[RMDB]
RNA sequence: GGGAACGACUCGAGUAGAGUCGAAAAGAUAUGGAUCCGGUGAGCUAGCAACGUAUCGGAAACGAUACUUUGCUUGGACCUCACGGGAUCCUAAGUCAAAACCCUGUAUCGUUCGCGAUACAGGGAACCAAAGUAGGGACUUCGGUCCCUACUUUGGAAAAGAAACAACAACAACAAC
Reactivity to DMS in 0.01 (KOAc 150mM, MgCl2 10mM, bicine 150mM(pH8.5), 24C), signal-to-noise 1, nucleotides 027 to 126: g000a040u000a300u000g000g010a010u000c000c000g020g030u000g010a010g000c120u000a080g010c010a000a020c060g000u010a000u000c010g010g000a090a020a140c000g030a000u000a000c000u000u000u000g000c000u000u010g040g020a150c300c030u020c000a040c020g020g000g000a000u000c010c000u000a030a090g000u010c010a080a060a120a210c000c000c000u000g010u010a000u000c000g000u000u040c290g020c000g000a000u000a000c000a000g030g000g010a000a010
Reactivity to 2A3 in 0.01 (KOAc 150mM, MgCl2 10mM, bicine 150mM(pH8.5), 24C), signal-to-noise 1, nucleotides 027 to 126: g020a010u040a010u080g000g010a000u010c040c170g230g010u010g020a020g010c140u200a030g020c030a010a020c020g000u000a000u010c000g070g000a070a060a010c030g010a000u000a020c030u010u010u000g000c030u000u030g100g140a050c000c030u000c000a000c180g000g030g000a000u000c000c010u000a030a000g050u000c030a000a040a170a300c000c000c020u000g000u020a000u010c030g020u070u070c300g010c020g190a000u000a010c000a000g040g020g000a000a020

Structure probing data (DMS and 2A3) for a 177-nucleotide construct. The data come from the RNA Mapping Database (RMDB), library TTRDES.